RNA sequence: GGGAACGACUCGAGUAGAGUCGAAAAGAUAUGGAAUACGCAGAUACAAGUAAUGAAGCCAGAGGAGGCUAUCGGAAACGAUAGGCUCCGACGAAGGCUUCAUUACUUGAGUAGUAUUCCUAAGUCAGGUAUCUAAUUGGUUCGCCAAUUAGAUACCAAAAGAAACAACAACAACAAC
Reactivity to 2A3 in 0.01 (KOAc 150mM, MgCl2 10mM, bicine 150mM(pH8.5), 24C), signal-to-noise 1, nucleotides 027 to 126: g000a060u130a100u270g030g020a000a000u010a020c060g040c300a060g060a150u150a170c010a030a000g040u020a000a000u000g010a010a000g000c020c030a030g010a010g030g020a000g080g030c000u000a000u020c010g000g040a130a150a050c010g010a000u020a000g100g090c000u000c010c010g080a040c000g040a000a010g000g030c000u030u010c000a000u000u010a010c000u000u000g000a000g020u030a010g010u010a000u000u000c000c000u010a170a000g140u000c080a050
Reactivity to DMS in 0.01 (KOAc 150mM, MgCl2 10mM, bicine 150mM(pH8.5), 24C), signal-to-noise 3, nucleotides 027 to 126: g000a060u010a300u010g000g020a000a000u000a020c000g030c160a180g000a090u010a090c000a000a010g000u020a010a000u000g010a020a000g020c010c000a040g010a160g000g010a010g030g010c010u010a010u000c000g000g000a080a160a240c010g010a010u000a000g010g000c000u000c000c000g000a020c270g000a100a110g010g000c000u000u010c010a010u000u000a000c000u000u010g000a060g030u000a050g000u020a010u000u000c000c000u000a040a110g000u010c070a090